[RMDB]
RNA sequence: GGGAACGACUCGAGUAGAGUCGAAAAGAGGAGAUCAAGAAGUCCUACUGAUCAAACAUGCGCUUCCAAUAGUAGAAGGACGUUAAGCAUUUAUCAUUGAACUAUAAUUGUUCAUUGAAGUCAUUGACUAGCGAGUCACUUUCGAGUGACUCGCUAGAAAAGAAACAACAACAACAAC
Reactivity to 2A3 in 0.01 (KOAc 150mM, MgCl2 10mM, bicine 150mM(pH8.5), 24C), signal-to-noise 2, nucleotides 027 to 126: g130a030g080g020a000g000a090u040c060a090a010g010a150a040g100u000c020c020u040a140c000u010g000a000u040c000a010a020a020c100a030u170g070c000g000c000u080u000c000c000a050a060u120a120g190u050a030g050a170a080g010g000a040c000g070u220u270a140a120g040c160a140u110u110u220a040u090c000a000u000u000g030a000a000c020u040a010u100a230a140u300u070g000u000u000c000a000u000u020g000a040a030g040u180c050a110u090u190g040a040
Reactivity to DMS in 0.01 (KOAc 150mM, MgCl2 10mM, bicine 150mM(pH8.5), 24C), signal-to-noise 1, nucleotides 027 to 126: g050a100g020g000a260g000a000u000c000a030a110g000a130a000g000u000c010c000u050a250c000u020g000a020u070c000a070a090a290c030a180u010g000c120g000c120u000u000c100c000a030a090u010a200g000u030a100g010a050a150g030g000a000c030g040u000u080a120a030g040c000a010u000u080u110a180u000c020a020u000u000g100a010a000c000u000a100u030a060a040u000u000g000u000u000c000a000u000u000g000a060a170g000u030c030a100u040u000g030a260